[RMDB]
RNA sequence: GGGAACGACUCGAGUAGAGUCGAAAAAGUGUUAAUCAAUAUUUAGUAUGAGAGGCAAUCAGAGGGCGCUAUCAUGCAAACUAGGAUUGUCUGCUCAUGCACAGAACCAACUACCGAUAACUAACAGAUCAGAAACUUGGUUCGCCAAGUUUCUGAUAAAAGAAACAACAACAACAAC
Reactivity to 2A3 in 0.01 (KOAc 150mM, MgCl2 10mM, bicine 150mM(pH8.5), 24C), signal-to-noise 2, nucleotides 027 to 126: a000g090u050g040u060u070a110a120u050c040a100a050u120a150u230u170u180a110g010u000a000u010g020a000g000a000g000g020c000a000a000u000c000a000g020a000g070g020g000c000g000c010u030a180u300c140a030u300g030c000a000a000a030c000u000a000g010g020a000u000u000g000u000c000u000g000c000u000c000a000u000g030c000a020c010a010g080a010a070c000c010a030a060c050u070a130c040c070g000a080u030a070a060c050u030a050a030c050a110g110
Reactivity to DMS in 0.01 (KOAc 150mM, MgCl2 10mM, bicine 150mM(pH8.5), 24C), signal-to-noise 2, nucleotides 027 to 126: a030g030u030g010u010u000a070a070u040c110a140a030u060a080u040u000u110a100g010u000a000u000g030a000g140a030g030g010c000a050a020u000c000a060g040a030g040g030g000c300g000c000u010a060u050c160a160u000g000c000a020a300a140c000u000a030g020g000a000u020u000g000u000c000u030g010c000u080c030a000u000g020c000a060c290a110g000a020a100c200c130a060a090c120u000a170c040c090g020a060u020a090a120c220u010a110a120c230a110g030